[RMDB]
RNA sequence: GGGAACGACUCGAGUAGAGUCGAAAAGAUAUGGAUCUGUUGUCAGCCUGGUAAGUCGGAAACGACUUAAGAGGGCUUGGAUUUACAGAGUCCUAAGUCAAAACUUGCUGUGUUCGCACAGCAAGAAGUAUUAUCUCCUCUUCGGAGGAGAUAAUACAAAAGAAACAACAACAACAAC
Reactivity to 2A3 in 0.01 (KOAc 150mM, MgCl2 10mM, bicine 150mM(pH8.5), 24C), signal-to-noise 4, nucleotides 027 to 126: g020a040u090a040u130g020g000a000u000c000u000g020u000u010g030u040c030a020g000c000c010u100g090g190u080a000a020g010u010c000g000g030a080a070a060c020g010a000c000u010u010a030a040g170a270g030g010g030c020u040u130g070g000a010u250u220u140a010c000a000g030a010g220u040c010c000u040a100a040g060u040c040a010a020a130a180c010u010u010g000c010u000g010u020g050u120u080c240g070c120a000c000a030g010c000a000a000g000a000a000
Reactivity to DMS in 0.01 (KOAc 150mM, MgCl2 10mM, bicine 150mM(pH8.5), 24C), signal-to-noise 5, nucleotides 027 to 126: g000a050u010a300u010g000g000a250u000c010u000g000u000u000g000u000c000a060g020c010c000u000g000g020u000a000a000g010u000c010g010g000a120a080a240c010g010a010c000u000u000a040a090g010a250g000g010g010c000u010u010g010g010a030u000u000u000a020c020a010g000a040g010u010c010c010u010a050a120g000u000c030a060a080a120a190c000u000u010g010c000u010g010u000g020u000u010c230g020c010a020c020a000g000c010a000a000g000a030a100
The data come from the RNA Mapping Database (RMDB), library TTRDEL. This 177-nucleotide RNA was probed chemically with 2A3 and DMS. The DMS profile rests on 6,143 reads. Conditions: 150 mM KOAc, 10 mM MgCl2 and 150 mM bicine (pH 8.5), 24 C. In probing experiments dimethyl sulfate is read out at A N1 and C N3, which are open when not base-paired. Reactivities are given for positions 27 through 126.